[RMDB]
RNA sequence: GGGAACGACUCGAGUAGAGUCGAAAACAAUACCAAAUUCGUAUCACGUUAUGCUUCGGGGGCAUGGCCAGCGUCCUUCCUCGAAGUGGACAGCGCAUAAUUCUUACCGCGACGUUGACCAAUCCCACCAUUGACAUGCUGCGCGGACUCGGCCUGACCUCAUCCCUAGUUUCGACUAGGGAUGAGGAAAAGAAACAACAACAACAAC
Reactivity to 2A3 in 0.01 (KOAc 150mM, MgCl2 10mM, bicine 150mM(pH8.5), 24C), signal-to-noise 3, nucleotides 027 to 156: c020a070a070u140a220c010c130a090a100a060u210u160c070g020u070a060u060c030a000c100g020u090u090a200u300g020c010u020u010c000g000g000g010g100g040c090a050u050g040g000c030c070a050g060c020g120u110c000c080u070u090c010c000u010c010g010a000a000g000u020g000g010a010c000a030g000c030g010c050a020u120a070a150u300u030c040u060u180a130c040c000g040c050g030a050c030g050u030u100g060a140c040c080a040a060u050c000c010c020a060c000c040a150u060u220g050a020c000a020u110g010c020u020g000c030g010c010g020g000a030c000u030c040g000g000c000c000u030g040a030